[RMDB]
This 177-nucleotide RNA was probed chemically with 2A3 and DMS. Reactivities are given for positions 27 through 126. Source: RMDB library OK2TRN, as collected in RNAgym. Conditions: 150 mM KOAc, 10 mM MgCl2 and 150 mM bicine (pH 8.5), 24 C. DMS adducts were read by reverse transcription with MarathonRT.
RNA sequence: GGGAACGACUCGAGUAGAGUCGAAAACAUGUACGUGGCUUGUCAACGCGUCUAAUGUUGACCACCGUCCUGGCGGCGGGCUUUGCCAUGCAUUUUAUCAAAGGUACCCCGCCUCCUUUGAUGCCGCCAGAGCUAGUAGGUUCGCCUACUAGCUCUGAAAAGAAACAACAACAACAAC
Reactivity to 2A3 in 0.01 (KOAc 150mM, MgCl2 10mM, bicine 150mM(pH8.5), 24C), signal-to-noise 2, nucleotides 027 to 126: c010a010u130g000u180a040c050g040u010g020g000c010u040u020g030u040c010a030a020c020g000c030g190u080c110u180a180a150u250g000u010u000g000a020c000c020a040c040c040g010u040c000c000u050g060g000c020g010g000c000g030g000g030c000u150u130u130g000c010c010a020u030g050c010a020u030u110u110u250a050u030c000a050a010a020g020g000u080a080c040c050c000c000g060c030c010u020c000c000u010u010u010g020a030u060g010c000c010g030c040
Reactivity to DMS in 0.01 (KOAc 150mM, MgCl2 10mM, bicine 150mM(pH8.5), 24C), signal-to-noise 2, nucleotides 027 to 126: c120a050u010g000u000a030c020g000u000g010g010c040u010u000g000u000c060a050a040c010g010c220g020u030c240u000a110a070u000g010u010u000g010a070c010c140a110c200c130g000u000c020c010u000g030g010c040g000g030c000g000g000g000c070u000u000u010g020c010c020a040u000g000c120a070u010u000u000u010a050u000c040a030a050a020g000g010u000a120c110c010c020c080g010c090c080u000c000c000u000u000u000g000a020u000g010c030c020g000c050